[RMDB]
This 207-nucleotide RNA was probed chemically with 2A3 and DMS. DMS adducts were read by reverse transcription with MarathonRT. For 2A3 the reverse transcriptase was SuperScript II with manganese. Values cover nucleotides 27 to 156.
RNA sequence: GGGAACGACUCGAGUAGAGUCGAAAAAUGCGGAGUACGCUCCGCGACAACACUUCUUUCGACCCGCUAACCGAGACCUAUGGGUCGUUAAAUUACGUCUCUAUCUUACUCACAUAACAUCGCACAAAAAACGUGGUUCGGUUCGCCGAACCACGAAGCAAAGAACAUAGUUCGCUAUGUUCUUUGCAAAAGAAACAACAACAACAAC
Reactivity to 2A3 in 0.01 (KOAc 150mM, MgCl2 10mM, bicine 150mM(pH8.5), 24C), signal-to-noise 5, nucleotides 027 to 156: a000u120g010c000g010g010a010g000u030a020c150g050c060u000c010c000g050c010g030a020c020a120a040c070a040c050u120u110c030u080u240u130c020g000a000c010c010c000g040c170u200a030a020c040c020g010a010g010a020c000c010u040a100u170g000g010g000u000c000g020u020u010a020a020a000u130u060a010c010g000u010c010u000c000u030a110u090c050u070u120a080c050u060c100a060c020a110u180a150a050c040a130u130c110g050c150a050c110a060a050a020a070a060a070c050g000u000g000g000u000u000c000g010g050u020u050c190g040c070c010g010a000a000c000c010a000c000g000a010a000
Reactivity to DMS in 0.01 (KOAc 150mM, MgCl2 10mM, bicine 150mM(pH8.5), 24C), signal-to-noise 2, nucleotides 027 to 156: a140u020g020c020g000g010a060g040u000a120c190g070c020u000c010c020g050c020g000a040c100a080a110c100a130c080u000u000c060u010u000u010c000g000a000c020c020c020g030c060u010a070a080c060c040g010a070g000a080c010c070u010a120u010g030g000g000u000c030g020u000u000a010a090a080u000u000a070c050g000u000c020u000c010u000a120u000c080u000u000a080c040u000c020a130c040a060u000a080a100c040a120u000c070g050c030a110c090a010a040a080a060a050a140c030g080u000g020g010u000u000c000g030g010u010u000c250g020c010c060g010a020a030c000c000a030c000g000a010a060